[RMDB]
RNA sequence: GGGAACGACUCGAGUAGAGUCGAAAAGAGCGCACCGGCUACACCAUGGUACAAGAGAACGGGCAGCGCAAGUACGGUGGACCCCCGCCCGGCUGGGAGGGCCCGCAUCCCCAGCGUGGCUGUGAGGCUGCUAGCAUCUGUUCGCAGAUGCUAGCAGAAAAGAAACAACAACAACAAC
Reactivity to DMS in 0.01 (KOAc 150mM, MgCl2 10mM, bicine 150mM(pH8.5), 24C), signal-to-noise 2, nucleotides 027 to 126: g000a100g000c090g030c070a100c030c020g010g030c070u030a110c060a090c100c070a070u010g020g000u010a080c110a080a110g030a070g020a140a070c100g020g000g000c050a090g000c050g020c080a080a060g010u000a030c050g010g010u010g010g020a160c030c020c000c060c060g000c060c020c040g000g030c030u000g010g010g070a090g010g010g010c030c050c030g010c100a080u000c030c000c000c030a050g000c030g050u000g020g020c000u000g010u000g010a150g010g000